[RMDB]
RNA sequence: GGGAACGACUCGAGUAGAGUCGAAAAUAAUAGUGCGCAGCGAGGCAAAUCUUUCUGCCGGGGAAGCUCCCGAACACGCCAACCUGUUUGUGGGGGCAGUACUCCAACGCUCCGUACACGCAGGAGAAAAUAUACGCCUAUUCGUAGGCGUAUAUUUAAAAGAAACAACAACAACAAC
Reactivity to DMS in 0.01 (KOAc 150mM, MgCl2 10mM, bicine 150mM(pH8.5), 24C), signal-to-noise 6, nucleotides 027 to 126: u030a080a080u030a090g020u000g020c030g020c210a030g010c020g000a210g020g000c030a040a090a090u040c110u000u020u010c070u000g000c010c010g000g000g000g020a180a150g000c030u000c010c000c000g010a070a060c130a050c130g000c100c090a090a140c050c050u000g010u000u010u000g010u020g010g010g000g000g020c010a070g020u020a060c070u020c070c050a100a130c040g000c000u000c100c010g000u010a060c030a070c130g000c040a050g010g000a170g000a090
Reactivity to 2A3 in 0.01 (KOAc 150mM, MgCl2 10mM, bicine 150mM(pH8.5), 24C), signal-to-noise 7, nucleotides 027 to 126: u190a010a030u090a030g030u030g020c040g000c010a010g020c000g040a040g020g010c050a070a060a100u120c090u040u220u020c050u060g010c000c000g010g000g000g020a070a020g010c020u010c000c000c000g010a040a020c070a000c070g060c040c010a070a090c020c010u020g090u030u040u070g120u140g020g010g000g000g000c030a010g030u050a090c050u030c050c030a060a030c020g000c010u010c020c010g040u040a000c030a000c040g010c020a020g000g100a030g100a050

This 177-nucleotide RNA was probed chemically with DMS and 2A3. The data come from the RNA Mapping Database (RMDB), library OK1LIB. For DMS the reverse transcriptase was MarathonRT. For DMS, 13,808 sequencing reads were counted.